[RMDB]
RNA sequence: GGGAACGACUCGAGUAGAGUCGAAAAACGUGCGAAAGCACGGUCAGCUCGUGAGGAUAUACAACACUGCUUCGGCAGUGUAUUAAGAUCACAUGAGGAUCACCCAUGUAGAAGGCCCGAGCUGAUACGCCCAGUAUGAUUUCGAUCAUACUGGGCGAAAAGAAACAACAACAACAAC
Reactivity to 2A3 in 0.01 (KOAc 150mM, MgCl2 10mM, bicine 150mM(pH8.5), 24C), signal-to-noise 1, nucleotides 027 to 126: a000c000g000u000g000c010g030a160a000a000g000c020a000c000g020g000u010c000a000g000c000u010c000g030u020g020a080g000g060a080u010a020u020a100c080a060a000c000a000c020u020g000c020u060u090c140g110g000c000a020g000u000g000u000a010u000u040a020a010g000a000u030c000a000c000a090u160g060a220g210g030a060u120c010a070c040c020c030a020u080g010u020a060g010a150a030g040g000c000c000c020g000a000g010c020u020g000a010u020a050
Reactivity to DMS in 0.01 (KOAc 150mM, MgCl2 10mM, bicine 150mM(pH8.5), 24C), signal-to-noise 2, nucleotides 027 to 126: a070c010g040u010g000c000g000a090a080a220g000c030a000c020g000g000u000c000a010g000c000u000c000g020u020g020a050g040g010a070u000a070u000a030c120a050a080c000a000c010u000g000c000u000u000c150g010g020c000a010g010u000g000u010a000u010u000a060a100g000a020u000c020a050c060a060u000g020a080g000g000a050u000c110a210c030c050c020a080u020g030u000a010g000a150a300g000g010c000c070c020g020a020g000c020u000g000a050u000a020
Notes: Structure probing data (2A3 and DMS) for a 177-nucleotide construct. The data come from the RNA Mapping Database (RMDB), library OK2TRN. Conditions: 150 mM KOAc, 10 mM MgCl2 and 150 mM bicine (pH 8.5), 24 C. Values cover nucleotides 27 to 126. Values are in units of 0.01, from 0 to 300, in steps of 10.